[RMDB]
RNA sequence: GGGAACGACUCGAGUAGAGUCGAAAAGACAUUCCCGAUCGGCGGUAAAGUCCGCGAGCCGAACGAAAAAGGUUUGGCAGGAACCGGUGAGAUUCCGGUACCGACAGUAUAGUCUGGAUGGAAGAAGGUAGCCUCCUCUCGUUCGCGAGAGGAGGAAGUAUAGUUAUACGUUCGCGUAUAACUAUACAAAAGAAACAACAACAACAAC
Reactivity to DMS in 0.01 (KOAc 150mM, MgCl2 10mM, bicine 150mM(pH8.5), 24C), signal-to-noise 4, nucleotides 027 to 156: g010a090c030a200u000u000c010c000c020g000a080u000c010g020g000c010g010g020u010a110a220a050g010u000c010c000g010c000g010a300g020c010c010g020a030a160c010g010a050a140a170a210a210g010g010u000u000u010g000g000c000a040g000g000a050a020c000c000g010g010u000g000a300g010a300u000u000c010c000g020g000u000a010c000c000g000a050c060a100g030u000a170u000a130g010u000c020u030g050g010a130u000g000g010a070a110g010a080a090g000g000u000a160g010c010c000u000c010c000u000c000u000c010g020u000u000c280g020c010g010a010g000a020g030g010a000g000g000a000a020
Reactivity to 2A3 in 0.01 (KOAc 150mM, MgCl2 10mM, bicine 150mM(pH8.5), 24C), signal-to-noise 3, nucleotides 027 to 156: g020a000c020a050u020u030c000c010c020g010a200u120c010g010g010c000g000g000u010a000a000a000g000u000c010c000g000c000g000a010g000c000c000g010a000a000c020g140a200a020a040a030a020g130g000u000u010u000g000g000c010a000g000g020a000a000c000c000g000g000u010g000a010g000a000u000u000c000c000g020g000u010a000c000c000g000a000c000a000g020u010a050u060a190g040u000c050u050g090g070a090u110g050g040a080a050g040a070a050g140g070u110a050g080c000c000u000c000c010u000c010u000c010g030u060u060c230g000c020g120a010g000a010g030g030a010g000g000a000a000
This 207-nucleotide RNA was probed chemically with DMS and 2A3. For DMS, 10,296 sequencing reads were counted. Source: RMDB library M2RFPK, as collected in RNAgym. Conditions: 150 mM KOAc, 10 mM MgCl2 and 150 mM bicine (pH 8.5), 24 C.